An RNA of 177 nucleotides, treated with DMS and 2A3 and read out base by base. The data come from the RNA Mapping Database (RMDB), library TTRDEL. DMS adducts were read by reverse transcription with MarathonRT.
RNA sequence: GGGAACGACUCGAGUAGAGUCGAAAAGAUAUGGACUGUCGCUAGACUGCCUGGAUCCCUCGGAAACGAGAACUCCAGGAUAGUCUUGGACCGACAGUCCUAAGUCAAAGGCAUCUUCGGAUGCCAAGAGAGUAAAUAUGUUCGCAUAUUUACUCUCAAAAGAAACAACAACAACAAC
Reactivity to DMS in 0.01 (KOAc 150mM, MgCl2 10mM, bicine 150mM(pH8.5), 24C), signal-to-noise 9, nucleotides 027 to 126: g010a040u000a300u000g000g010a010c000u000g010u000c000g000c030u000a010g000a010c000u000g000c000c010u000g000g000a000u000c030c030c000u000c000g000g000a100a090a200c010g000a020g000a180a040c060u000c000c000a010g010g000a030u000a000g000u000c000u000u010g020g000a120c300c020g000a010c010a010g010u000c000c000u000a010a070g000u000c030a060a120a120g000g000c000a000u000c000u000u010c200g020g010a010u000g000c000c000a020a040
Reactivity to 2A3 in 0.01 (KOAc 150mM, MgCl2 10mM, bicine 150mM(pH8.5), 24C), signal-to-noise 7, nucleotides 027 to 126: g020a020u070a070u160g000g000a000c000u000g000u010c000g010c030u000a000g000a010c000u010g020c000c000u010g000g000a020u060c000c020c000u000c000g020g020a090a070a060c010g000a000g040a210a000c000u000c000c010a010g010g000a010u030a000g000u000c010u010u050g030g060a070c070c030g000a000c010a000g000u000c000c000u000a020a010g010u000c020a050a050a070g010g000c000a010u000c000u060u100c300g160g000a000u010g000c000c000a000a000
Record summary:
The DMS profile rests on 20,393 reads. Conditions: 150 mM KOAc, 10 mM MgCl2 and 150 mM bicine (pH 8.5), 24 C.